Structure probing data (DMS and 2A3) for a 177-nucleotide construct. The reactions ran in a buffer of 150 mM KOAc, 10 mM MgCl2 and 150 mM bicine (pH 8.5), at 24 C.

RNA sequence: GGGAACGACUCGAGUAGAGUCGAAAAAGCAGGAGACGCAGGAGCUCCGUGCAGAGAUAGAGAAGGUGCAGGCGAGGUUGGAGCGCGUCCAUGGAGAGCUCGAGGGCGCGAGAGAGUCUCUCCGAAGGGUAAAUAUAGCGUUCGCGCUAUAUUUACCAAAAGAAACAACAACAACAAC
Reactivity to DMS in 0.01 (KOAc 150mM, MgCl2 10mM, bicine 150mM(pH8.5), 24C), signal-to-noise 5, nucleotides 027 to 126: a110g000c050a160g000g010a030g010a040c040g020c090a080g000g010a130g010c020u000c010c030g000u010g000c040a050g000a110g010a090u020a060g000a090g000a090a100g000g010u000g000c030a050g010g020c080g000a050g000g000u010u000g000g000a080g010c050g010c030g010u000c030c050a100u030g010g000a040g000a010g010c020u010c020g020a190g000g000g010c010g000c030g010a050g000a260g000a020g000u010c010u000c010u000c000c000g010a110a110g000
Reactivity to 2A3 in 0.01 (KOAc 150mM, MgCl2 10mM, bicine 150mM(pH8.5), 24C), signal-to-noise 7, nucleotides 027 to 126: a010g040c040a020g010g040a020g020a020c060g040c150a050g050g090a100g030c000u010c020c010g010u040g010c010a010g040a010g020a120u140a090g090a010g020a120a030g060g020u050g030c040a020g040g000c020g040a030g040g000u060u130g040g030a050g000c020g000c020g030u020c020c010a060u170g020g010a030g000a010g030c020u030c090g050a100g010g030g000c030g000c020g020a030g000a000g000a010g040u040c000u000c000u000c030c000g020a070a060g120